[RMDB]
RNA sequence: GGGAACGACUCGAGUAGAGUCGAAAAGAUAUGGACAAUUCUGGAGUUACGUUGAUCGUUAGUCGGAAACGACUAACGGGAGUAACCCAGAGAUUGUCCUAAGUCAAAACCACCGGUUCGCCGGUGGCGAUCCAUGUCAGUUCGCUGACAUGGAUCGAAAAGAAACAACAACAACAAC
Reactivity to 2A3 in 0.01 (KOAc 150mM, MgCl2 10mM, bicine 150mM(pH8.5), 24C), signal-to-noise 3, nucleotides 027 to 126: g030a030u080a040u180g000g000a000c010a000a050u030u000c020u020g050g040a300g120u010u010a020c040g160u280u030g020a010u010c000g000u000u010a020g000u000c010g000g030a090a090a070c000g000a000c010u010a020a000c010g000g020g000a010g000u010a000a010c000c010c000a000g010a010g000a000u020u030g000u020c000c000u010a070a010g050u020c050a040a020a090a130c000c000a020c020c020g060g060u080u080c300g040c100c020g000g000u000g000g010
Reactivity to DMS in 0.01 (KOAc 150mM, MgCl2 10mM, bicine 150mM(pH8.5), 24C), signal-to-noise 2, nucleotides 027 to 126: g000a060u010a300u000g010g020a010c000a050a030u010u000c000u000g000g020a180g030u000u000a000c010g000u000u000g000a020u010c010g000u010u010a010g000u010c000g010g000a100a070a220c010g030a020c000u030a000a010c000g010g000g000a010g010u000a000a000c000c000c000a000g000a030g000a030u000u010g000u000c000c000u000a010a080g000u010c040a100a100a130a300c000c000a000c010c000g000g000u000u020c260g010c000c010g000g010u000g000g010